Background
The record gives the reactivity of an RNA of 207 nucleotides to 2A3 and DMS. For 2A3 the reverse transcriptase was SuperScript II with manganese. Reactivities are given for positions 27 through 156. For DMS the reverse transcriptase was MarathonRT. It was measured as part of the RMDB library OK3TST. The RNA was probed in 150 mM KOAc, 10 mM MgCl2 and 150 mM bicine (pH 8.5) at 24 C.

RNA sequence: GGGAACGACUCGAGUAGAGUCGAAAAUAGACACAUCUGCCUACAACCACAUGUUCACACGCGGAUGGCCCUCCACUCAUGCUGCCUGCACCCCGCCCCCGACACACUCCUGCAUGCAUGUACCUCUGUGGAUACUGUGGAACACAUGAAAUCCUCAAUCAUUAAUACCCUUCGGGGUAUUAAUGAUAAAAGAAACAACAACAACAAC
Reactivity to 2A3 in 0.01 (KOAc 150mM, MgCl2 10mM, bicine 150mM(pH8.5), 24C), signal-to-noise 2, nucleotides 027 to 156: u090a020g130a030c000a000c000a130u030c040u070g030c020c020u110a050c070a070a030c020c050a030c040a110u150g030u090u060c030a040c050a030c170g040c020g060g020a060u030g060g000c000c000c000u040c020c000a030c020u060c010a040u140g020c050u030g030c030c020u030g000c030a040c020c030c020c000g050c000c000c000c000c010g020a000c000a000c000a000c030u030c020c000u030g050c030a040u100g010c000a010u030g040u100a050c010c050u040c020u040g030u050g040g000a030u040a070c030u010g000u020g020g040a100a010c040a000c010a040u130g050a090a040a020u050c000c060u100c000a030
Reactivity to DMS in 0.01 (KOAc 150mM, MgCl2 10mM, bicine 150mM(pH8.5), 24C), signal-to-noise 2, nucleotides 027 to 156: u000a070g000a180c020a100c010a080u000c050u000g040c000c010u000a090c030a070a170c030c030a160c090a080u010g000u010u010c040a040c030a100c160g040c050g000g020a050u000g010g010c020c030c000u000c010c010a080c080u000c020a090u010g010c000u000g010c010c010u000g000c050a100c000c060c010c030g020c050c010c010c000c020g000a100c060a060c030a060c030u010c020c030u000g010c000a050u010g010c030a060u000g000u000a100c020c020u000c040u000g030u020g010g000a110u010a030c040u030g010u000g020g010a100a080c040a030c040a120u020g000a070a070a110u000c010c010u000c040a160